The record gives the reactivity of an RNA of 177 nucleotides to 2A3 and DMS.
[RMDB]
RNA sequence: GGGAACGACUCGAGUAGAGUCGAAAAGCUAUACCGUUCGCGGUAUAGCAAAAUCUUUCCGAGAUGUACUAAUACGAGCCUAUUAGUCUACGGUUCGAGUCCAAACGGGUUACUUCGGUAACCCGAAGUUAUUUAAUAUGUUCGCAUAUUAAAUAACAAAAGAAACAACAACAACAAC
Reactivity to 2A3 in 0.01 (KOAc 150mM, MgCl2 10mM, bicine 150mM(pH8.5), 24C), signal-to-noise 4, nucleotides 027 to 126: g000c000u000a000u000a010c000c000g020u030u070c270g010c000g090g000u010a010u000a000g000c000a000a010a000a000u020c010u010u040u020c010c000g050a070g010a160u060g040u120a020c020u030a010a040u050a070c130g160a060g090c020c020u010a020u050u020a030g030u070c020u050a030c020g010g000u010u030c020g010a020g050u000c020c020a030a080a090c020g000g010g010u000u000a000c000u020u080c200g060g000u000a000a000c000c010c000g000a000a000
Reactivity to DMS in 0.01 (KOAc 150mM, MgCl2 10mM, bicine 150mM(pH8.5), 24C), signal-to-noise 6, nucleotides 027 to 126: g000c000u000a000u000a000c000c000g030u000u010c200g030c010g010g000u000a000u000a000g000c000a010a020a070a090u000c040u000u000u000c000c010g010a130g000a090u000g000u010a030c020u000a010a020u000a040c080g010a130g020c210c180u000a020u000u000a010g000u000c020u000a070c030g000g000u000u000c050g010a050g000u000c020c030a030a100a210c030g010g010g010u000u000a000c000u000u010c160g020g000u000a000a000c000c000c000g010a000a030
Background
Values cover nucleotides 27 to 126. The RNA was probed in 150 mM KOAc, 10 mM MgCl2 and 150 mM bicine (pH 8.5) at 24 C.